[RMDB]
RNA sequence: GGGAACGACUCGAGUAGAGUCGAAAAGAUAUGGAGGGUGGGAGGCUUUUGACGCAGUGGUGUCGGAAACGACACCCACUGCGAUAAGCCUUUACCCUCCUAAGUCAAACGCACGUUCGCGUGCGAACCUUAAGCAUUACUUCGGUAAUGCUUAAGGAAAAGAAACAACAACAACAAC
Reactivity to DMS in 0.01 (KOAc 150mM, MgCl2 10mM, bicine 150mM(pH8.5), 24C), signal-to-noise 5, nucleotides 027 to 126: g000a050u010a300u000g000g000a000g010g000g020u000g000g010g010a010g010g010c000u000u000u010u000g020a240c080g020c000a010g020u000g000g030u000g010u010c010g010g000a090a090a250c010g010a010c000a010c130c040c030a000c000u000g010c010g030a030u000a010a010g010c000c010u000u000u010a030c000c000c010u000c000c010u000a010a050g010u000c020a100a100a290c030g000c000a010c010g020u000u020c300g020c000g040u000g010c000g010a070a130
Reactivity to 2A3 in 0.01 (KOAc 150mM, MgCl2 10mM, bicine 150mM(pH8.5), 24C), signal-to-noise 4, nucleotides 027 to 126: g020a020u070a030u150g020g000a000g010g060g010u170g100g140g010a020g010g000c030u110u090u130u230g170a100c040g000c000a010g000u000g010g000u000g010u010c010g030g010a070a080a040c010g010a000c000a000c010c010c000a010c010u000g000c000g010a000u010a000a000g000c000c000u000u000u000a000c000c000c000u000c000c000u000a000a000g000u000c000a020a000a070c020g000c020a000c010g040u090u110c300g020c010g120u010g000c000g030a070a060